Chemical mapping of a 177-nucleotide RNA with DMS and 2A3. Values cover nucleotides 27 to 126. Source: RMDB libraries RFM100 and RFMREP, as collected in RNAgym. The RNA was probed in 150 mM KOAc, 10 mM MgCl2 and 150 mM bicine (pH 8.5) at 24 C. 2A3 adducts were read by reverse transcription with SuperScript II with manganese.
RNA sequence: GGGAACGACUCGAGUAGAGUCGAAAAACUGGCUGGGGCUUGGCCAUAGGCCAUCAGCGCAUGCGUGGAACCUUUGUGGCUCCUCUGCCGAUCCAUACUGCGGAACUCCUAGCCGCUUGUUUUGCUCCUGACUGUAAAUAUUCGUAUUUACAGUCAGAAAAGAAACAACAACAACAAC
Reactivity to DMS in 0.01 (KOAc 150mM, MgCl2 10mM, bicine 150mM(pH8.5), 24C), signal-to-noise 9, nucleotides 027 to 126: a080c070u010g000g010c000u000g010g010g010g010c300u010u000g000g030c020c020a110u010a070g020g010c010c010a040u000c090a100g020c030g010c050a040u020g020c050g040u000g000g000a050a090c080c050u010u020u010g030u020g010g010c010u000c080c050u010c070u010g010c010c020g000a090u010c040c040a070u010a080c100u000g010c020g000g010a070a070c120u010c020c010u000a070g010c010c010g010c090u010u010g010u000u000u000u000g000c300u000c040
Reactivity to 2A3 in 0.01 (KOAc 150mM, MgCl2 10mM, bicine 150mM(pH8.5), 24C), signal-to-noise 9, nucleotides 027 to 126: a000c060u070g010g000c010u010g000g000g010g010c030u070u130g060g000c020c010a140u090a050g020g000c010c000a030u080c060a060g070c030g010c090a080u300g020c030g030u020g010g050a190a300c020c010u100u100u200g110u100g030g000c020u110c030c020u060c070u080g000c000c010g000a020u010c010c010a040u050a130c040u080g020c010g030g040a080a050c040u030c030c020u020a040g020c010c010g000c000u010u030g010u000u020u010u040g020c020u020c010